[RMDB]
Structure probing data (2A3) for a 207-nucleotide construct. The RNA was probed in 150 mM KOAc, 10 mM MgCl2 and 150 mM bicine (pH 8.5) at 24 C. 2A3 adducts were read by reverse transcription with SuperScript II with manganese. The 2A3 profile rests on 469 reads.
RNA sequence: GGGAACGACUCGAGUAGAGUCGAAAAAUAGGAGUUCAGAUAGACUUGAUUACAAAAGUAAUUGAUUUGAGACGCCGUCAAGUCCAUGUCGCAUGCUUUUAGUAUGUUGCACAUGUCGUCAAGUGUAAUUUUCUUGUCCAUAAACAAUCUGAGUAUACUACAUGGCUAGCUUCGGCUAGCCAUGUAGAAAAGAAACAACAACAACAAC
Reactivity to 2A3 in 0.01 (KOAc 150mM, MgCl2 10mM, bicine 150mM(pH8.5), 24C), signal-to-noise 1, nucleotides 027 to 156: a000u190a030g060g060a080g000u020u070c000a020g010a040u020a020g030a010c000u020u000g000a000u000u080a000c010a060a190a000a020g030u040a020a070u070u130g130a050u010u040u100g080a020g040a020c080g030c120c110g040u000c020a010a000g010u000c000c020a020u010g000u000c020g050c050a040u030g000c000u130u230u070u090a030g000u010a000u050g020u050u150g000c080a020c000a010u090g000u040c000g040u030c110a170a060g040u060g060u090a120a220u060u130u030u000c050u070u050g020u000c000c000a090u170a090a100a040c050a040a010u080c050u050g000a000g010u130a080u080a220